Conditions: 150 mM KOAc, 10 mM MgCl2 and 150 mM bicine (pH 8.5), 24 C. Structure probing data (DMS and 2A3) for a 177-nucleotide construct. DMS adducts were read by reverse transcription with MarathonRT. The DMS profile rests on 1,085 reads.
[RMDB]
RNA sequence: GGGAACGACUCGAGUAGAGUCGAAAAGCCGACUGCACGUGCGAGCGAGCAGUUUUCGAAAUCGCACGUUUCACGUAAAGACCCAACUCUACUCGAUGCGAGGGUCAGCAAGCAAGCAGCAAUAAAACAGAUUCUAACCUUUCGAGGUUAGAAUCUGAAAAGAAACAACAACAACAAC
Reactivity to DMS in 0.01 (KOAc 150mM, MgCl2 10mM, bicine 150mM(pH8.5), 24C), signal-to-noise 2, nucleotides 027 to 126: g020c040c060g020a030c080u010g030c300a050c000g030u000g020c050g030a040g000c000g000a030g020c150a150g000u010u000u050u000c030g000a020a070a070u000c000g000c020a010c000g000u000u010u000c020a060c100g010u000a020a080a070g020a070c050c080c010a180a040c000u000c010u000a020c000u000c010g030a010u000g000c080g010a110g010g000g000u000c030a090g010c050a020a050g010c050a000a040g020c020a110g000c060a040a100u020a000a050a100a140
Reactivity to 2A3 in 0.01 (KOAc 150mM, MgCl2 10mM, bicine 150mM(pH8.5), 24C), signal-to-noise 1, nucleotides 027 to 126: g050c000c000g050a040c090u090g050c010a000c010g010u010g010c000g000a040g070c020g010a010g040c230a140g050u070u030u160u040c030g020a070a090a140u030c030g000c020a010c010g010u030u070u090c060a030c030g060u080a020a110a090g050a000c020c000c010a000a000c000u000c000u000a000c000u000c020g020a030u070g000c020g000a060g000g000g000u010c030a000g020c010a010a020g050c010a090a000g040c000a020g000c020a040a050u090a220a070a010a000